[RMDB]
RNA sequence: GGGAACGACUCGAGUAGAGUCGAAAAGAUCACCGGCGAGGACGCGCAGCUGUUCACCGCCGUGCGGCGCAGCGUCACCGUCGACGGCGUGGCCACCGACAUCGGCCUGGUCGGCGACGUCGACCAGGUUGGGGAGAUGAUUCGUCAUCUCCCCAACAAAAGAAACAACAACAACAAC
Reactivity to DMS in 0.01 (KOAc 150mM, MgCl2 10mM, bicine 150mM(pH8.5), 24C), signal-to-noise 7, nucleotides 027 to 126: g000a110u010c080a130c100c020g020g010c020g010a130g000g000a030c040g020c050g000c110a300g000c020u000g000u000u010c050a070c060c100g010c120c130g010u010g020c030g020g000c040g020c080a280g020c050g000u000c020a060c050c020g010u000c010g000a110c050g010g000c030g010u010g000g010c030c000a100c040c030g010a080c200a100u010c110g000g000c030c010u000g000g010u000c010g010g010c010g020a100c170g000u000c010g000a030c010c030a010g010
Reactivity to 2A3 in 0.01 (KOAc 150mM, MgCl2 10mM, bicine 150mM(pH8.5), 24C), signal-to-noise 6, nucleotides 027 to 126: g070a090u130c050a030c110c000g010g010c010g010a080g040g000a010c010g000c010g000c070a100g000c020u020g020u150u100c050a040c080c110g100c060c070g000u020g010c000g010g000c010g000c080a100g020c010g020u020c020a030c060c010g000u010c020g010a010c000g010g000c020g010u050g020g010c010c000a020c010c030g100a110c050a140u130c100g030g000c000c020u010g010g000u000c020g010g000c030g080a150c150g050u010c000g000a010c000c010a020g010